[RMDB]
RNA sequence: GGGAACGACUCGAGUAGAGUCGAAAAGCAAAUGAUGUUUGCCUUGAUCUACGAAACUUGACACCUCAGGAGAGUGCAUUUGUUUUGCUGAUGUGCACUCAGUGGCAGAGGAAGAGCAGGCUGAGGCCAGUAGUGGACCAUUCGUGGUCCACUACUGAAAAGAAACAACAACAACAAC
Reactivity to DMS in 0.01 (KOAc 150mM, MgCl2 10mM, bicine 150mM(pH8.5), 24C), signal-to-noise 4, nucleotides 027 to 126: g010c030a020a050a080u010g010a120u000g010u000u000u000g000c020c050u000u000g000a100u000c030u000a080c080g010a110a120a080c030u010u000g000a100c150a090c020c070u000c060a120g010g010a160g010a020g020u000g020c000a030u000u000u000g020u000u000u000u010g010c130u000g010a050u010g010u000g000c010a030c010u000c020a070g040u000g000g030c080a110g000a060g010g010a060a080g010a170g030c030a030g000g000c030u000g010a080g010g020c050
Reactivity to 2A3 in 0.01 (KOAc 150mM, MgCl2 10mM, bicine 150mM(pH8.5), 24C), signal-to-noise 3, nucleotides 027 to 126: g050c020a060a040a050u160g160a050u150g080u050u090u060g030c000c020u020u050g030a060u030c010u050a060c060g070a090a090a010c010u000u010g030a010c020a030c030c020u060c060a060g080g070a090g070a020g020u020g000c000a020u080u060u170g200u090u180u100u140g100c060u110g020a140u090g020u010g010c010a000c000u000c000a010g010u050g040g000c090a020g000a030g250g050a100a020g000a020g000c030a010g000g040c010u010g030a020g020g010c000